[RMDB]
RNA sequence: GGGAACGACUCGAGUAGAGUCGAAAAUAGGCGAACGAGAGGCCCUCUCAUGUGCGGAGUUGUCACGCUGACAGAAUUGUUAUGAUGUCCGAUUCCGGUAGCAUCGCGGCGAUGUUUUCAUAGGACAUCUUAUGAACCCAAGUGCUUCGGGGAAGCAAUCAUUUAUGCCAUUCGUGGCAUAAAUGAUAAAAGAAACAACAACAACAAC
Reactivity to 2A3 in 0.01 (KOAc 150mM, MgCl2 10mM, bicine 150mM(pH8.5), 24C), signal-to-noise 3, nucleotides 027 to 156: u150a020g020g000c020g040a040a050c080g020a050g030a020g200g020c020c050c010u000c000u000c030a140u190g050u060g070c070g030g000a040g030u050u040g060u150c050a010c120g000c030u040g060a020c040a050g020a040a150u190u120g050u050u070a090u190g020a010u020g010u000c010c010g040a050u140u050c060c010g070g030u020a010g020c020a000u010c030g010c040g160g070c120g030a000u020g030u010u070u070u090c010a050u040a000g000g000a000c000a020u010c000u000u020a100u040g050a020a030c000c020c000a070a020g060u020g050c020u020u060c080g090g000g020g000a000a000g000c030a020
Reactivity to DMS in 0.01 (KOAc 150mM, MgCl2 10mM, bicine 150mM(pH8.5), 24C), signal-to-noise 3, nucleotides 027 to 156: u000a080g020g000c030g020a100a070c060g010a120g000a170g020g000c030c030c020u000c030u000c080a120u000g030u000g030c030g030g060a160g010u000u000g020u000c010a090c090g050c030u010g000a150c060a090g000a070a150u000u010g000u010u010a100u000g010a080u000g010u000c010c000g000a210u000u000c110c050g020g010u000a050g000c020a050u000c020g050c100g000g030c130g010a040u000g020u000u010u020u000c080a090u000a160g020g010a060c040a030u000c000u010u000a050u000g000a070a150c050c010c020a080a160g000u010g020c050u010u010c050g010g030g070g020a060a080g020c040a130
Source information:
An RNA of 207 nucleotides, treated with 2A3 and DMS and read out base by base. For DMS, 6,625 sequencing reads were counted. 2A3 adducts were read by reverse transcription with SuperScript II with manganese. The RNA was probed in 150 mM KOAc, 10 mM MgCl2 and 150 mM bicine (pH 8.5) at 24 C. The 2A3 profile rests on 1,360 reads. Reactivities are rounded to 0.1 and cut off at 0 and 3. It was measured as part of the RMDB library OK3TST. Values cover nucleotides 27 to 156. DMS adducts were read by reverse transcription with MarathonRT.